Chemical mapping of a 207-nucleotide RNA with DMS and 2A3. The reactions ran in a buffer of 150 mM KOAc, 10 mM MgCl2 and 150 mM bicine (pH 8.5), at 24 C. In probing experiments dimethyl sulfate is read out at A N1 and C N3, which are open when not base-paired. Source: RMDB library PDB130, as collected in RNAgym. For DMS, 2,743 sequencing reads were counted. For 2A3, 1,807 sequencing reads were counted.

[RMDB]
RNA sequence: GGGAACGACUCGAGUAGAGUCGAAAACGGUCUGUAAUGGACCGGAUAGGGGUUGAGGAGACAAUCCAACAUCACCCCGCCCGAAAGGGAGCAGACUUCCUGCUGGUCUCUCUUUGCGAGAUAGCCUGUAGAACCUCUUGAAUGGAGACAAGGCAAAGUCUAUGUAAUCCUUCGGGAUUACAUAGACAAAAGAAACAACAACAACAAC
Reactivity to DMS in 0.01 (KOAc 150mM, MgCl2 10mM, bicine 150mM(pH8.5), 24C), signal-to-noise 2, nucleotides 027 to 156: c000g020g000u000c020u020g030u000a140a160u010g020g000a010c000c030g010g000a090u000a080g030g030g060g070u000u000g020a160g030g000a080g020a120c170a140a230u000c030c020a000a170c090a300u000c020a050c000c000c020c000g040c020c060c010g010a030a070a080g000g020g000a040g010c010a090g020a090c070u000u000c040c040u000g000c040u020g060g020u000c050u000c000u000c070u000u010u000g020c070g000a050g010a090u020a110g030c010c020u000g020u020a080g020a120a130c080c030u000c030u000u000g000a110a090u000g010g010a090g030a070c100a070a080g010g010c040a040a100a180
Reactivity to 2A3 in 0.01 (KOAc 150mM, MgCl2 10mM, bicine 150mM(pH8.5), 24C), signal-to-noise 3, nucleotides 027 to 156: c000g000g010u000c000u020g090u140a080a160u240g010g000a000c010c020g000g000a050u080a030g000g000g000g010u000u010g000a000g000g020a020g040a070c100a080a100u010c000c000a010a000c030a010u170c020a000c000c030c000c000g000c000c000c000g010a050a020a000g030g030g000a010g020c040a030g030a150c030u130u090c040c040u070g010c010u020g050g080u000c000u000c000u000c000u060u050u060g100c060g000a060g010a090u070a070g050c010c000u060g020u070a040g080a170a170c020c000u060c060u120u210g110a120a080u160g030g000a010g020a020c060a070a030g010g010c000a040a030a000